The data come from the RNA Mapping Database (RMDB), library M2PK50. The record gives the reactivity of an RNA of 177 nucleotides to DMS and 2A3. Reactivities are given for positions 27 through 126. For DMS the reverse transcriptase was MarathonRT.
RNA sequence: GGGAACGACUCGAGUAGAGUCGAAAACAUUGGCAUUUCGAUGCCAAUGGGUCUGCGUCGCGCGGCCGCCCAGUCGUUCCCGCGGCCGCGUGACGCAGUUUGGGCAGCUCGAGUUCGCUCGAGCUAAGGUCCUUAAUAUAUUCGUAUAUUAAGGACCAAAAGAAACAACAACAACAAC
Reactivity to DMS in 0.01 (KOAc 150mM, MgCl2 10mM, bicine 150mM(pH8.5), 24C), signal-to-noise 2, nucleotides 027 to 126: c010a010u000u000g010g000c000a010u000u010u020c140g010a030u000g010c000c000a000a000u000g000g010g000u000c000u000g020c010g020u000c010g000c020g020c010g000g010c000c000g030c000c120c280a050g010u000c000g010u000u000c010c000c000g120c000g000g000c000c000g030c010g010u000g000a000c010g020c000a000g000u000u000u010g010g010g020c160a060g010c000u000c000g000a020g010u010u020c200g010c000u000c000g010a010g010c010u000a020a060
Reactivity to 2A3 in 0.01 (KOAc 150mM, MgCl2 10mM, bicine 150mM(pH8.5), 24C), signal-to-noise 1, nucleotides 027 to 126: c000a000u000u000g000g020c000a020u060u090u110c210g140a020u050g000c000c020a000a000u000g000g010g040u010c000u010g030c030g000u000c000g000c010g030c060g040g040c030c030g030c010c100c000a010g030u010c000g010u010u000c000c020c000g000c020g020g020c080c070g030c020g000u010g000a000c010g000c000a000g010u000u060u010g000g020g020c060a010g010c000u000c010g030a010g000u060u060c110g030c010u010c010g000a020g000c010u020a040a020